[RMDB]
RNA sequence: GGGAACGACUCGAGUAGAGUCGAAAACAAGCUAGGAGGCAUUCCUGUUGGGUGCAUCGCUGUGGAGACCAGAACGGUGGAGGCGAAGGUCCCUGCAGACCCUGCGAACCCUGACUCGAGGGAAGCAUACUUUGUGCGAUUUCGAUCGCACAAAGUAAAAAGAAACAACAACAACAAC
Reactivity to DMS in 0.01 (KOAc 150mM, MgCl2 10mM, bicine 150mM(pH8.5), 24C), signal-to-noise 2, nucleotides 027 to 126: c100a090a100g020c120u000a080g020g010a090g020g010c060a120u000u010c050c030u010g010u000u000g000g000g000u020g070c090a090u000c040g010c020u000g000u000g010g000a110g000a040c020c020a110g020a100a060c240g010g000u010g030g010a050g000g000c010g000a170a100g010g000u000c050c020c000u000g000c040a060g000a140c070c000c060u010g010c000g030a120a140c000c000c020u020g000a070c120u010c120g000a070g010g000g010a080a160g020c070a080
Reactivity to 2A3 in 0.01 (KOAc 150mM, MgCl2 10mM, bicine 150mM(pH8.5), 24C), signal-to-noise 1, nucleotides 027 to 126: c000a010a020g120c030u150a030g060g050a000g030g060c080a090u100u060c000c020u010g070u010u110g040g000g000u100g060c020a030u070c000g000c020u040g080u230g100g000a010g030a020c000c010a030g130a300a080c120g040g030u050g000g020a030g060g000c010g020a020a040g080g010u000c000c000c000u000g000c030a050g000a110c000c000c000u030g020c000g060a170a190c000c010c000u030g040a180c030u070c160g070a050g000g030g000a030a000g000c000a030
Background:
An RNA of 177 nucleotides, treated with DMS and 2A3 and read out base by base. For 2A3 the reverse transcriptase was SuperScript II with manganese. The reactions ran in a buffer of 150 mM KOAc, 10 mM MgCl2 and 150 mM bicine (pH 8.5), at 24 C. Source: RMDB library OK2TRN, as collected in RNAgym. For 2A3, 1,015 sequencing reads were counted.